RNA sequence: GGGAACGACUCGAGUAGAGUCGAAAACUUUCGGUUUGUCCUGCCGGAGGCCAUUGCUAUCGGAGUCCGAUUUAGCCAUGCUAGUCGCACGAGUUUAGACUCGUAGCAUAUAGCUCAGUAACACGUGGAAGGGAACUUUAUUCGUAAAGUUCCCUUCAAAAGAAACAACAACAACAAC
Reactivity to DMS in 0.01 (KOAc 150mM, MgCl2 10mM, bicine 150mM(pH8.5), 24C), signal-to-noise 6, nucleotides 027 to 126: c070u010u020u010c050g000g010u000u010u020g000u020c020c010u000g000c030c020g020g010a080g010g000c030c050a060u000u010g010c030u010a050u010c080g000g000a110g000u010c030c010g000a100u010u010u000a050g000c020c100a090u020g020c010u010a050g000u010c210g010c040a040c040g000a030g010u000u020u030a140g010a080c010u000c010g000u000a070g030c000a060u010a150u010a050g000c000u010c150a090g000u010a060a070c150a090c110g000u010g010
Reactivity to 2A3 in 0.01 (KOAc 150mM, MgCl2 10mM, bicine 150mM(pH8.5), 24C), signal-to-noise 7, nucleotides 027 to 126: c000u040u030u060c010g010g080u020u080u120g100u110c000c030u030g020c000c010g010g000a020g040g000c040c020a070u030u080g010c010u030a020u100c040g100g000a090g110u020c050c000g020a030u110u030u080a030g000c020c030a040u090g000c020u030a030g060u070c040g030c000a010c010g020a020g020u100u130u120a140g090a070c000u000c010g010u010a060g000c000a020u070a010u020a100g010c010u000c060a030g050u060a080a030c030a010c160g130u090g100
The record gives the reactivity of an RNA of 177 nucleotides to DMS and 2A3. The data come from the RNA Mapping Database (RMDB), libraries RFM100 and RFMREP.